About this RNA: An RNA of 177 nucleotides, treated with 2A3 and DMS and read out base by base. Source: RMDB libraries RFM100 and RFMREP, as collected in RNAgym. Conditions: 150 mM KOAc, 10 mM MgCl2 and 150 mM bicine (pH 8.5), 24 C. Values are in units of 0.01, from 0 to 300, in steps of 10.
[RMDB]
RNA sequence: GGGAACGACUCGAGUAGAGUCGAAAAGGCAGACUUAAGAUGGCGGCGUUUGCAUGGGAUGUAGUAGCCGCAUGCUUACCGGGAGUGGCAAGGCGGCUAAAGAAUAAAUCUACUAACGAAAGUCCAGAAUUAAAACGCUGUUCGCAGCGUUUUAAUUAAAAGAAACAACAACAACAAC
Reactivity to 2A3 in 0.01 (KOAc 150mM, MgCl2 10mM, bicine 150mM(pH8.5), 24C), signal-to-noise 6, nucleotides 027 to 126: g060g000c030a020g030a090c040u080u110a120a040g060a110u120g040g020c020g030g000c030g040u030u050u050g050c040a050u080g060g000g030a070u090g020u050a050g020u030a010g010c000c010g000c010a010u010g000c000u120u150a070c010c010g130g080g040a170g010u070g010g000c020a090a160g090g000c000g000g000c000u020a070a050a010g050a020a010u110a080a060a000u010c020u020a020c010u040a060a060c030g060a140a030a010g040u030c020c000a020g070
Reactivity to DMS in 0.01 (KOAc 150mM, MgCl2 10mM, bicine 150mM(pH8.5), 24C), signal-to-noise 6, nucleotides 027 to 126: g010g010c040a040g010a080c070u010u020a100a060g020a100u010g010g020c020g010g000c080g010u000u020u020g010c050a050u000g000g010g010a130u030g020u000a040g010u010a030g020c000c010g010c000a030u000g000c010u010u040a070c050c020g010g010g010a170g020u010g000g010c000a020a110g000g010c010g000g000c000u000a020a040a070g000a090a090u020a070a060a080u020c030u010a050c030u000a090a090c090g000a100a060a050g010u010c030c020a130g020